RNA sequence: GGGAACGACUCGAGUAGAGUCGAAAAGAUAUGGAAUGGGUUUGAGCGAUAAGUCGGUGUCGGAAACGACAUGCGACUUUUGACGCUUUAUCCAUUCCUAAGUCAAACCUCCGGUUCGCCGGAGGAAUCUUAUACGUGGCUUCGGCCACGUAUAAGAAAAAGAAACAACAACAACAAC
Reactivity to DMS in 0.01 (KOAc 150mM, MgCl2 10mM, bicine 150mM(pH8.5), 24C), signal-to-noise 2, nucleotides 027 to 126: g010a020u000a300u010g010g000a000a020u000g010g020g040u000u020u010g040a020g010c000g000a200u000a000a000g010u000c010g010g020u000g000u010c000g010g010a140a070a160c000g020a010c000a000u000g000c000g040a020c010u010u000u030u020g030a250c090g000c000u010u000u000a020u020c000c000a010u000u000c000c000u010a010a070g010u000c010a150a230a200c010c000u000c000c040g000g000u000u010c300g030c000c000g010g000a010g000g020a020a000
Reactivity to 2A3 in 0.01 (KOAc 150mM, MgCl2 10mM, bicine 150mM(pH8.5), 24C), signal-to-noise 1, nucleotides 027 to 126: g020a000u040a030u110g000g030a000a010u020g000g080g050u210u230u300g070a050g030c150g100a090u050a300a020g040u020c010g020g010u000g010u000c000g040g000a100a000a000c010g020a010c030a000u070g230c010g010a020c040u030u000u030u040g030a000c010g000c060u000u000u010a010u040c000c000a010u000u000c000c000u020a060a010g030u010c020a050a030a200c010c000u010c000c000g060g090u070u080c300g020c150c020g000g020a020g010g000a000a030